[RMDB]
RNA sequence: GGGAACGACUCGAGUAGAGUCGAAAAGAUAUGGACCUUAUAGUCUCAACAGCUUAUUCGGAAACGAAUAAGACAUGAGAGUAUACUGGGUCCUAAGUCAAAAGUACAAUGCUUCGGCAUUGUACAAGAGAACUUUAUAGUUCGCUAUAAAGUUCUCAAAAGAAACAACAACAACAAC
Reactivity to 2A3 in 0.01 (KOAc 150mM, MgCl2 10mM, bicine 150mM(pH8.5), 24C), signal-to-noise 5, nucleotides 027 to 126: g040a020u100a050u150g000g000a010c000c000u040u050a050u050a260g270u040c000u000c020a080a230c080a100g070c000u010u010a010u010u020c020g010g030a080a080a070c010g000a000a000u010a010a010g040a020c010a040u120g020a030g010a010g070u000a010u010a030c260u160g040g010g000u000c000c000u010a130a010g070u020c040a000a050a100a180g000u010a010c000a010a010u010g000c010u070u160c300g150g000c000a000u000u010g000u000a000c000a010a000
Reactivity to DMS in 0.01 (KOAc 150mM, MgCl2 10mM, bicine 150mM(pH8.5), 24C), signal-to-noise 5, nucleotides 027 to 126: g000a070u010a300u010g000g000a020c000c000u000u000a000u000a010g000u010c010u010c010a030a100c300a240g000c010u000u000a010u000u000c000g010g000a170a140a230c010g010a020a000u000a010a000g020a040c080a150u000g010a020g000a030g010u000a000u000a020c300u000g010g010g000u000c000c000u000a020a090g000u000c040a110a110a120a150g000u000a000c000a010a000u000g010c010u010u020c250g030g030c000a010u000u010g000u000a000c000a070a080